[RMDB]
Chemical mapping of a 177-nucleotide RNA with DMS. Values cover nucleotides 27 to 126. For DMS, 913 sequencing reads were counted. Conditions: 150 mM KOAc, 10 mM MgCl2 and 150 mM bicine (pH 8.5), 24 C. DMS adducts were read by reverse transcription with MarathonRT.
RNA sequence: GGGAACGACUCGAGUAGAGUCGAAAAAAGAUCAAAAAUGCUUUGUUAUCUACAAACAAAGCUGUAGUCAGUCUAUCAAAUGGGGUCAGUGUUUUAACCAGCAAAGUGUUAGAUCUCAAGAAUUACACAUAUGGAGCACGUUCGCGUGCUCCAUAUGAAAAGAAACAACAACAACAAC
Reactivity to DMS in 0.01 (KOAc 150mM, MgCl2 10mM, bicine 150mM(pH8.5), 24C), signal-to-noise 2, nucleotides 027 to 126: a090a060g000a050u010c060a050a090a100a130a000u000g000c000u000u000u000g000u000u000a080u030c090u010a120c240a030a020a050c010a050a020a030g000c010u000g030u000a070g020u020c120a120g000u010c080u010a060u010c100a040a050a100u010g020g020g000g020u000c060a020g000u010g000u000u010u010u000a030a110c130c090a050g000c090a070a010a050g020u020g010u000u030a060g010a030u010c040u010c040a070a120g010a120a040u010u000a110c150a080